[RMDB]
This 177-nucleotide RNA was probed chemically with 2A3 and DMS.
For DMS, 9,447 sequencing reads were counted.
Values cover nucleotides 27 to 126.
For DMS the reverse transcriptase was MarathonRT.
2A3 adducts were read by reverse transcription with SuperScript II with manganese.
It was measured as part of the RMDB library OK1LIB.
RNA sequence: GGGAACGACUCGAGUAGAGUCGAAAACUUGACUGGGCUAAACAGUCAAGAGGCUAGAAUCUUGAUCGAGUAGCCCGAUCAAGAAAAUGUGCAGUGUUUGAGCGAGAAGCUCAAGCACUGCAUAAAAAUGGUGAUAUUACUUCGGUAAUAUCACCAUAAAAGAAACAACAACAACAAC
Reactivity to 2A3 in 0.01 (KOAc 150mM, MgCl2 10mM, bicine 150mM(pH8.5), 24C), signal-to-noise 7, nucleotides 027 to 126: c000u000u000g010a000c030u020g000g030g040c050u070a090a100a040c010a010g000u000c000a000a000g000a010g030g020c100u180a050g070a210a110u010c000u000u000g000a010u040c030g040a020g130u050a030g030c000c020c000g010a040u000c000a000a000g040a040a100a020a020u130g000u010g000c000a000g000u000g000u010u000u010g000a000g000c020g030a080g080a280a040g040c000u000c000a000a000g000c000a000c000u000g010c000a000u000a000a010a000a000
Reactivity to DMS in 0.01 (KOAc 150mM, MgCl2 10mM, bicine 150mM(pH8.5), 24C), signal-to-noise 4, nucleotides 027 to 126: c000u000u000g000a020c010u000g000g010g020c070u000a070a080a070c040a070g010u000c000a000a010g010a050g000g040c160u010a080g010a170a100u010c010u000u020g000a010u000c050g010a090g010u010a050g000c050c050c000g020a030u000c000a020a000g000a080a030a100a110u010g020u000g010c010a000g010u000g000u000u000u000g000a020g030c000g010a210g020a130a150g000c010u000c000a000a030g000c000a000c000u000g000c000a000u000a000a030a070a110